Structure probing data (2A3) for a 177-nucleotide construct.
2A3 adducts were read by reverse transcription with SuperScript II with manganese.
Conditions: 150 mM KOAc, 10 mM MgCl2 and 150 mM bicine (pH 8.5), 24 C.
Values cover nucleotides 27 to 126.
The 2A3 profile rests on 2,212 reads.
The data come from the RNA Mapping Database (RMDB), library TTRDEL.
[RMDB]
RNA sequence: GGGAACGACUCGAGUAGAGUCGAAAAGAUAUGGACUACUCUCAAUGAUGUACUGGUUCGGAAACGAACUGUAUUGAGAGAGUAGUCCUAAGUCAAAGCUACAUUGCGGUUCGCCGCAAUGUAGCAACCCUCGGCUAAUGUUCGCAUUAGCCGAGGGAAAAGAAACAACAACAACAAC
Reactivity to 2A3 in 0.01 (KOAc 150mM, MgCl2 10mM, bicine 150mM(pH8.5), 24C), signal-to-noise 1, nucleotides 027 to 126: g010a010u040a010u020g000g010a000c010u000a000c000u030c010u010c050a130a300u300g170a120u130g200u020a000c030u210g130g050u010u010c000g000g000a000a000a000c000g000a010a000c000u000g020u000a010u030u300g060a070g000a000g020a000g000u000a000g000u000c000c010u000a000a000g010u000c020a050a050a000g000c000u000a000c000a000u010u010g000c000g000g200u070u140c300g060c100c000g000c000a000a000u010g000u010a000g030c010a000a000